An RNA of 177 nucleotides, treated with DMS and 2A3 and read out base by base. DMS (dimethyl sulfate) methylates the pairing face of unpaired adenines and cytosines. 2A3 adducts were read by reverse transcription with SuperScript II with manganese. 2A3 is a SHAPE reagent: it acylates the 2'-hydroxyl of flexible nucleotides of all four kinds. For 2A3, 6,860 sequencing reads were counted. The reactions ran in a buffer of 150 mM KOAc, 10 mM MgCl2 and 150 mM bicine (pH 8.5), at 24 C. For DMS, 3,323 sequencing reads were counted.

RNA sequence: GGGAACGACUCGAGUAGAGUCGAAAAGUUAACUCCUUCGGGAGUUAACAAAAGGACAGUGCGAGUCCAAACGCACAAAGAUGACAGAAAUGUCAUCAAAUAAAAGUCCUAGCUUCGGCUAGGACAACACAACGUUAUACUUCGGUAUAACGUUGUGAAAAGAAACAACAACAACAAC
Reactivity to DMS in 0.01 (KOAc 150mM, MgCl2 10mM, bicine 150mM(pH8.5), 24C), signal-to-noise 3, nucleotides 027 to 126: g010u000u000a000a000c000u000c000c000u010u000c230g020g010g000a020g000u000u000a000a000c000a030a080a110a130g000g000a140c140a100g010u000g010c010g020a190g000u000c050c060a050a140a160c010g020c010a000c020a080a100a110g000a010u010g000a020c000a010g010a100a090a120u010g010u000c010a010u000c000a050a100a080u010a020a060a060a120g020u010c000c000u000a010g010c000u000u000c260g010g010c000u000a010g000g000a000c000a020a070
Reactivity to 2A3 in 0.01 (KOAc 150mM, MgCl2 10mM, bicine 150mM(pH8.5), 24C), signal-to-noise 3, nucleotides 027 to 126: g000u000u010a010a000c010u020c010c000u020u050c090g040g010g010a000g000u000u000a000a000c000a000a010a000a020g080g010a040c110a080g000u000g020c010g020a020g060u010c040c000a090a090a010c010g000c020a000c010a030a080a000g000a000u000g000a000c000a000g080a050a080a010u020g000u000c000a000u010c010a010a040a010u060a000a040a010a030g000u000c000c000u000a000g000c010u030u040c260g100g000c000u000a000g000g020a000c000a010a000